[RMDB]
RNA sequence: GGGAACGACUCGAGUAGAGUCGAAAAGAUAUGGACCGUGUAGACAUGCAGGUCUCCUCACGUCUUAUAUAUCGGAAACGAUAUAUAAGACGUGAGGAGGUCUGCAACAGCUACCGGUCCUAAGUCACCCUUUUAAAUAGUUCGCUAUUUAAAAGGGAAAAGAAACAACAACAACAAC
Reactivity to DMS in 0.01 (KOAc 150mM, MgCl2 10mM, bicine 150mM(pH8.5), 24C), signal-to-noise 4, nucleotides 027 to 126: g020a050u000a300u000g000g010a020c000c000g010u020g030u000a000g010a050c090a300u010g010c000a000g000g000u000c000u000c000c000u000c000a000c000g010u000c000u000u010a000u000a000u000a010u010c010g010g000a130a130a300c010g020a010u000a000u000a010u000a000a010g000a010c000g000u000g010a010g010g000a000g000g000u000c000u000g010c000a000a010c260a240g000c000u000a010c000c000g000g010u000c000c000u000a000a060g000u000c060a250
Reactivity to 2A3 in 0.01 (KOAc 150mM, MgCl2 10mM, bicine 150mM(pH8.5), 24C), signal-to-noise 2, nucleotides 027 to 126: g060a030u070a080u220g000g000a000c010c020g080u200g010u300a010g060a150c060a150u080g000c000a000g000g030u000c000u000c000c000u000c000a000c010g000u020c010u000u010a010u010a010u000a000u000c000g050g010a080a070a090c000g000a000u000a010u010a000u000a020a000g000a010c010g000u000g000a000g000g000a000g000g000u000c000u000g020c010a000a000c000a000g030c000u020a000c000c000g020g000u010c000c000u000a020a000g010u010c020a090
Structure probing data (DMS and 2A3) for a 177-nucleotide construct. The data come from the RNA Mapping Database (RMDB), library TTRINS. For 2A3, 12,602 sequencing reads were counted. For DMS the reverse transcriptase was MarathonRT.